[RMDB]
RNA sequence: GGGAACGACUCGAGUAGAGUCGAAAACGAUAUAUCGUACGAUCGAUAUCGGCAUCGCGAUGCGCCGCGCGCGGCCGUAGCGCAUAUGCCGCGUAGCGCAUGCCGUACGCGGCAUUACGUAUACGCGCACUCAAACGAGGUUCGCCUCGUUUGAGUGAAAAGAAACAACAACAACAAC
Reactivity to 2A3 in 0.01 (KOAc 150mM, MgCl2 10mM, bicine 150mM(pH8.5), 24C), signal-to-noise 2, nucleotides 027 to 126: c010g050a030u030a000u000a010u100c040g010u090a050c140g080a200u230c030g020a010u010a010u060c020g030g000c040a070u140c050g000c000g010a040u040g030c000g000c030c030g020c000g000c020g000c030g020g010c080c040g050u050a010g010c020g010c030a040u060a040u150g050c030c040g000c010g000u040a040g070c010g010c040a070u140g000c050c000g000u000a000c010g040c000g040g040c000a000u040u040a020c040g030u040a060u040a160c030g050c000g040
Reactivity to DMS in 0.01 (KOAc 150mM, MgCl2 10mM, bicine 150mM(pH8.5), 24C), signal-to-noise 2, nucleotides 027 to 126: c060g000a150u070a020u000a010u010c000g020u000a130c200g020a110u000c040g000a020u010a020u000c040g010g010c040a080u000c060g010c020g000a040u000g000c030g070c000c110g020c040g000c060g010c090g000g010c070c040g040u020a030g000c010g020c000a050u010a050u010g020c020c010g020c000g040u000a080g000c000g000c150a110u000g000c110c030g010u000a010c030g000c000g010g000c030a050u010u010a020c040g010u000a100u000a020c070g000c050g000

Record summary:
Chemical mapping of a 177-nucleotide RNA with 2A3 and DMS. The RNA was probed in 150 mM KOAc, 10 mM MgCl2 and 150 mM bicine (pH 8.5) at 24 C. For 2A3, 2,714 sequencing reads were counted. DMS adducts were read by reverse transcription with MarathonRT. The DMS profile rests on 2,775 reads.